[RMDB]
RNA sequence: GGGAACGACUCGAGUAGAGUCGAAAAUCGUGUCAUUGCAGUAUAUAGCCCCAACGGGUGCUGUGAUGGGUAGGGGAGCGUCGUCUGCCGGGUGAAGCGGCACUGGAAGGUAGUCGUGGACGGUUGACACGUCUUGAAGUUUCGACUUCAAGACGUGAAAAGAAACAACAACAACAAC
Reactivity to DMS in 0.01 (KOAc 150mM, MgCl2 10mM, bicine 150mM(pH8.5), 24C), signal-to-noise 6, nucleotides 027 to 126: u010c070g020u010g000u000c030a030u000u000g010c010a030g010u000a140u000a160u010a140g010c010c000c010c090a130a160c290g010g010g000u000g010c020u000g020u000g010a030u000g010g000g000u000a050g010g010g000g000a070g000c070g010u000c060g020u000c040u000g010c020c020g000g000g020u010g010a120a150g010c010g000g010c020a040c040u010g000g020a120a080g010g010u000a090g030u000c020g010u000g000g000a040c030g010g010u000u000g010a180
Reactivity to 2A3 in 0.01 (KOAc 150mM, MgCl2 10mM, bicine 150mM(pH8.5), 24C), signal-to-noise 3, nucleotides 027 to 126: u090c030g020u020g040u040c010a020u010u070g020c000a010g070u020a110u040a050u100a250g040c000c000c000c010a050a060c100g000g020g000u060g020c010u020g000u030g040a030u020g000g000g100u150a090g010g020g020g020a020g020c060g040u070c040g040u000c060u060g000c000c000g050g040g110u110g010a020a000g020c010g010g010c040a040c040u040g040g100a070a060g050g020u080a090g010u030c030g040u030g010g040a020c020g010g030u020u020g010a020

The record gives the reactivity of an RNA of 177 nucleotides to DMS and 2A3. DMS adducts were read by reverse transcription with MarathonRT. The reactions ran in a buffer of 150 mM KOAc, 10 mM MgCl2 and 150 mM bicine (pH 8.5), at 24 C. For 2A3, 4,240 sequencing reads were counted. The DMS profile rests on 11,016 reads. The data come from the RNA Mapping Database (RMDB), library OK2TRN. Values cover nucleotides 27 to 126.